[RMDB]
RNA sequence: GGGAACGACUCGAGUAGAGUCGAAAAGUUGUAGGAAACAAGUUCCUCUUCCAGAACCUGACAGUUACCACCACGGUAGUGAUACAUCUGUAGGUUAUCAUAACGAGGCUCAAGGAUAGCAGCAAUCCGUUCUUCCUUAGAACCUUGGUGUCGGUUGAGUUUUUCGUUAAUUCGUUAACGAAAAACUAAAAGAAACAACAACAACAAC
Reactivity to 2A3 in 0.01 (KOAc 150mM, MgCl2 10mM, bicine 150mM(pH8.5), 24C), signal-to-noise 3, nucleotides 027 to 156: g050u070u070g060u120a030g000g070a090a040a070c040a150a050g030u040u020c000c000u000c020u020u040c030c010a060g040a080a040c020c010u050g180a040c010a020g000u050u090a040c030c050a020c030c000a170c170g080g100u180a110g020u030g040a040u050a210c090a050u070c010u020g010u030a020g040g010u010u070a080u140c050a040u050a190a020c000g000a000g010g010c000u020c030a000a000g020g020a040u090a210g070c060a010g010c050a120a110u120c050c040g000u000u000c020u040u020c010c000u020u020a090g000a080a010c000c000u010u030g030g010u040g050u060c090g010g030u030u040g010
Reactivity to DMS in 0.01 (KOAc 150mM, MgCl2 10mM, bicine 150mM(pH8.5), 24C), signal-to-noise 2, nucleotides 027 to 156: g010u000u010g000u010a080g010g010a070a120a140c100a090a210g010u000u000c010c010u010c040u010u010c030c060a190g020a060a070c010c000u010g000a050c010a030g000u000u000a010c010c030a030c030c020a170c130g020g010u020a040g020u000g010a020u000a040c220a080u000c010u000g020u000a040g030g020u010u000a050u000c050a070u000a050a070c070g000a030g030g030c030u000c000a070a030g010g010a040u000a050g020c060a120g010c070a110a090u000c090c070g000u000u010c020u000u000c010c040u000u000a140g030a020a010c000c000u000u010g020g010u000g010u000c050g000g000u000u000g010